[RMDB]
RNA sequence: GGGAACGACUCGAGUAGAGUCGAAAAGUAUCCCUAGAUGAUAAAACACCGCACAUGGCUCGUAAGAGCGGUUAAAUUAGCAAGUAAUGCAAAUUACGCGAGGUAACGCAUGGCCUAGCCUCGUUAGAAAAGGGAGAAUCCUUCGGGAUUCUCCCAAGAUAUCAAGAGUCUUCGGACUCUUGAUAUCAAAAGAAACAACAACAACAAC
Reactivity to 2A3 in 0.01 (KOAc 150mM, MgCl2 10mM, bicine 150mM(pH8.5), 24C), signal-to-noise 2, nucleotides 027 to 156: g030u020a150u090c000c000c010u010a020g030a200u090g010a010u170a130a110a040a040c040a000c010c000g000c020a040c010a180u080g120g000c020u000c070g040u110a110a080g010a020g090c020g000g000u020u080a030a110a180u140u110a030g040c060a170a000g060u210a260a020u070g070c040a030a120a060u150u060a070c010g000c010g030a000g000g030u010a050a000c040g030c150a080u200g070g000c000c000u010a030g000c000c000u000c000g010u010u010a010g070a110a130a030a010g010g000g040a000g000a000a000u000c000c030u020u040c070g030g000g000a000u000u000c000u000c000c010c000a000a000
Reactivity to DMS in 0.01 (KOAc 150mM, MgCl2 10mM, bicine 150mM(pH8.5), 24C), signal-to-noise 2, nucleotides 027 to 156: g020u000a130u000c000c010c000u000a150g010a100u000g020a120u010a030a140a160a170c060a040c030c030g000c050a120c100a090u000g020g030c030u000c030g010u000a090a200g030a050g020c040g010g000u000u000a050a090a150u000u010a090g010c090a090a120g030u000a140a080u000g010c050a080a100a060u000u000a050c040g010c000g010a030g050g000u000a050a180c100g010c030a040u000g000g030c030c030u010a300g000c010c000u000c010g010u000u000a080g000a050a050a120a140g000g020g000a060g010a030a000u000c000c000u000u000c300g090g000g020a010u000u000c010u000c000c000c000a000a010
Chemical mapping of a 207-nucleotide RNA with 2A3 and DMS. The DMS profile rests on 3,086 reads. 2A3 adducts were read by reverse transcription with SuperScript II with manganese. The data come from the RNA Mapping Database (RMDB), library M2RFPK.